Chemical mapping of a 177-nucleotide RNA with 2A3 and DMS. The data come from the RNA Mapping Database (RMDB), library M2PK50. For DMS, 1,405 sequencing reads were counted. The reactions ran in a buffer of 150 mM KOAc, 10 mM MgCl2 and 150 mM bicine (pH 8.5), at 24 C. Values are in units of 0.01, from 0 to 300, in steps of 10.
[RMDB]
RNA sequence: GGGAACGACUCGAGUAGAGUCGAAAACUUCCAGCGUUCGCGCUGGAAGAAAGGCCGAGUAGUGUUGGGUCGCGAAAGGCCAUAAAUCAACAAUCACACAGAAAAUCGGUAUCUUCGGAUACCGAAAGAAAUUAUAUUGCUUCGGCAAUAUAAUUUCAAAAGAAACAACAACAACAAC
Reactivity to 2A3 in 0.01 (KOAc 150mM, MgCl2 10mM, bicine 150mM(pH8.5), 24C), signal-to-noise 2, nucleotides 027 to 126: c010u000u020c000c000a000g010c000g040u060u090c180g000c000g000c060u000g010g000a020a000g000a040a010a010g000g000c000c000g000a010g010u000a010g000u010g190u150u160g200g110g050u190c000g000c010g020a030a010a030g000g000c000c000a000u030a000a010a020u110c010a020a100c030a010a110u200c040a080c000a000c030a120g100a060a130a000a110u030c000g000g020u000a000u000c010u020u050c130g030g000a000u010a000c000c020g000a000a000a000
Reactivity to DMS in 0.01 (KOAc 150mM, MgCl2 10mM, bicine 150mM(pH8.5), 24C), signal-to-noise 2, nucleotides 027 to 126: c000u020u010c000c000a030g010c000g040u010u020c200g010c000g020c010u000g000g010a000a000g000a020a130a060g010g010c000c000g000a040g030u010a070g000u010g040u000u000g040g000g010u010c030g010c030g010a120a200a160g000g000c000c000a040u000a020a090a110u000c130a060a080c120a090a080u010c120a070c110a090c200a150g010a090a030a120a110u000c000g000g000u000a000u000c000u020u010c150g030g000a010u010a000c000c000g000a000a030a070